RNA sequence: GGGAACGACUCGAGUAGAGUCGAAAAGAUAUGGACUCCCCACCUACUGAACUACGAGCAGAGUAUCGGAAACGAUACGAUCUCGCAGUAGAGGUCCUAAGUCAAAAGAAUGUGUUCGCACAUUCAAUCAUAUGUAAGACUUCGGUCUUACAUAUGAAAAAGAAACAACAACAACAAC
Reactivity to 2A3 in 0.01 (KOAc 150mM, MgCl2 10mM, bicine 150mM(pH8.5), 24C), signal-to-noise 7, nucleotides 027 to 126: g020a030u130a110u210g000g040a010c020u160c050c020c010c000a020c010c000u030a020c000u020g050a200a090c080u150a050c300g010a010g020c150a040g080a020g050u000a010u010c000g040g000a110a030a030c010g000a000u000a000c000g000a010u000c010u000c000g000c000a000g010u010a000g020a020g020g000u000c000c000u070a280a080g130u090c080a060a060a010a110g020a010a000u010g010u010g030u070u150c290g030c100a010c010a020u010u010c010a000a070
Reactivity to DMS in 0.01 (KOAc 150mM, MgCl2 10mM, bicine 150mM(pH8.5), 24C), signal-to-noise 9, nucleotides 027 to 126: g010a060u000a220u010g010g010a020c020u010c110c000c000c070a300c110c000u000a020c010u000g010a080a060c120u010a300c020g010a010g000c200a020g010a300g000u000a000u000c010g000g000a080a070a140c010g010a000u010a000c000g000a130u000c000u000c000g000c000a020g000u000a010g000a130g020g000u000c000c000u000a090a120g010u010c080a080a080a120a140g010a020a010u000g010u000g010u000u010c220g020c000a010c000a000u000u000c010a100a140

The record gives the reactivity of an RNA of 177 nucleotides to 2A3 and DMS.
The reactions ran in a buffer of 150 mM KOAc, 10 mM MgCl2 and 150 mM bicine (pH 8.5), at 24 C.
The 2A3 profile rests on 24,860 reads.
For DMS the reverse transcriptase was MarathonRT.